This 177-nucleotide RNA was probed chemically with 2A3 and DMS. Conditions: 150 mM KOAc, 10 mM MgCl2 and 150 mM bicine (pH 8.5), 24 C. 2A3 adducts were read by reverse transcription with SuperScript II with manganese. For DMS, 48,638 sequencing reads were counted. DMS adducts were read by reverse transcription with MarathonRT.
RNA sequence: GGGAACGACUCGAGUAGAGUCGAAAAGGUAGUGCGAGUCGUAUGACCGGCCUUUUGCGACGAGUCCAAGAUGCUGUUUGGCCGGUAUUAGCAUCGGACGAGGCUGCGAAGCAGUCGAGCACUACGAGGGAUGCUCGGUGUUCGCAUCGAGUAUCCCAAAAGAAACAACAACAACAAC
Reactivity to 2A3 in 0.01 (KOAc 150mM, MgCl2 10mM, bicine 150mM(pH8.5), 24C), signal-to-noise 9, nucleotides 027 to 126: g140g000u010a000g000u000g010c030g050a040g030u010c010g020u140a140u170g050a030c000c000g010g000c000c010u090u150u140u260g030c020g010a020c010g020a030g020u000c000c000a040a060g000a010u020g000c030u040g070u230u130u080g020g000c000c000g000g000u010a020u010u200a000g000c000a000u000c000g000g000a000c000g000a040g010g000c000u010g000c040g080a140a040g010c000a000g000u010c010g020a010g000c000a000c000u000a000c010g000a080
Reactivity to DMS in 0.01 (KOAc 150mM, MgCl2 10mM, bicine 150mM(pH8.5), 24C), signal-to-noise 7, nucleotides 027 to 126: g000g000u000a000g010u000g010c010g010a140g000u000c010g020u000a080u010g000a040c010c000g000g010c000c020u000u030u020u040g010c010g000a030c030g000a210g000u000c010c020a100a150g010a020u000g000c000u010g000u030u010u000g000g000c000c000g010g000u000a010u020u030a020g020c000a010u000c000g000g000a020c010g010a150g010g000c000u000g000c020g010a150a140g020c000a000g010u000c000g000a230g000c010a010c010u010a010c020g010a120